[RMDB]
RNA sequence: GGGAACGACUCGAGUAGAGUCGAAAACUGGUUCCUGCCGAAGUUUCCCUCAGGAUAGCAAAGACUUUUAAAUUAGUUUUAUGAGGUAAAGCAAAUGAUUAGAGGGCUUGGGAAUGUAAUGUUCUUAAACUUGGAGAUACUUCGGUAUCUCCAAGUUAAAAGAAACAACAACAACAAC
Reactivity to 2A3 in 0.01 (KOAc 150mM, MgCl2 10mM, bicine 150mM(pH8.5), 24C), signal-to-noise 2, nucleotides 027 to 126: c010u030g000g140u010u000c000c000u020g020c040c000g130a030a010g050u060u080u140c000c020c000u070c020a000g130g000a070u150a050g050c000a030a000a180g050a150c040u130u000u030u170a130a170a050u090u300a050g150u120u010u000u000a110u240g000a020g020g000u070a140a040a070g000c000a000a010a110u090g010a050u140u170a010g000a000g020g000g080c000u010u050g130g010g000a070a070u010g030u200a090a110u200g000u020u000c000u000u000a020
Reactivity to DMS in 0.01 (KOAc 150mM, MgCl2 10mM, bicine 150mM(pH8.5), 24C), signal-to-noise 2, nucleotides 027 to 126: c040u010g000g010u000u000c020c000u000g010c000c040g020a060a040g000u030u030u010c000c030c000u040c050a090g020g000a060u010a090g000c070a070a090a110g000a160c000u000u010u010u010a010a040a070u000u080a180g000u020u010u010u000a010u000g000a020g010g000u010a050a070a030g000c010a040a110a110u000g000a150u030u020a040g000a060g000g030g050c060u020u030g000g010g010a130a020u010g000u000a030a050u010g000u000u000c020u000u000a180